[RMDB]
RNA sequence: GGGAACGACUCGAGUAGAGUCGAAAAGAUAUGGAUCCAUGCAAGACAUGAGCCAAGAGUCGGAAACGACUCUGGCUCAACAGCUUGUCAUGGAUCCUAAGUCAAAAUCCUACGUUCGCGUAGGAAACAUAACUGAUCCCUUCGGGGAUCAGUUAUGAAAAGAAACAACAACAACAAC
Reactivity to DMS in 0.01 (KOAc 150mM, MgCl2 10mM, bicine 150mM(pH8.5), 24C), signal-to-noise 2, nucleotides 027 to 126: g000a070u000a300u010g000g020a000u000c000c000a000u000g020c010a000a000g000a100c060a300u000g000a010g030c000c000a050a080g010a020g010u000c000g010g010a130a100a220c000g010a020c000u000c000u000g000g000c000u000c000a000a040c300a150g000c010u000u000g000u000c000a020u000g000g000a010u000c000c000u030a000a080g010u020c030a100a110a100a170u000c000c010u000a020c010g010u010u010c190g010c010g020u000a010g020g000a040a080a140
Reactivity to 2A3 in 0.01 (KOAc 150mM, MgCl2 10mM, bicine 150mM(pH8.5), 24C), signal-to-noise 1, nucleotides 027 to 126: g030a020u070a050u170g000g000a010u000c000c000a010u000g000c000a000a030g050a200c120a210u250g000a000g020c010c000a120a120g000a010g000u000c010g020g040a100a050a030c000g010a010c000u000c000u000g000g000c000u000c010a010a000c000a000g060c000u020u040g190u300c000a000u000g000g000a000u000c000c000u000a000a000g000u010c000a000a010a000a300u080c000c000u000a000c010g030u070u080c300g000c000g200u010a010g000g000a010a000a000

Record summary
The data come from the RNA Mapping Database (RMDB), library TTRDES. The record gives the reactivity of an RNA of 177 nucleotides to DMS and 2A3. The reactions ran in a buffer of 150 mM KOAc, 10 mM MgCl2 and 150 mM bicine (pH 8.5), at 24 C. For DMS the reverse transcriptase was MarathonRT.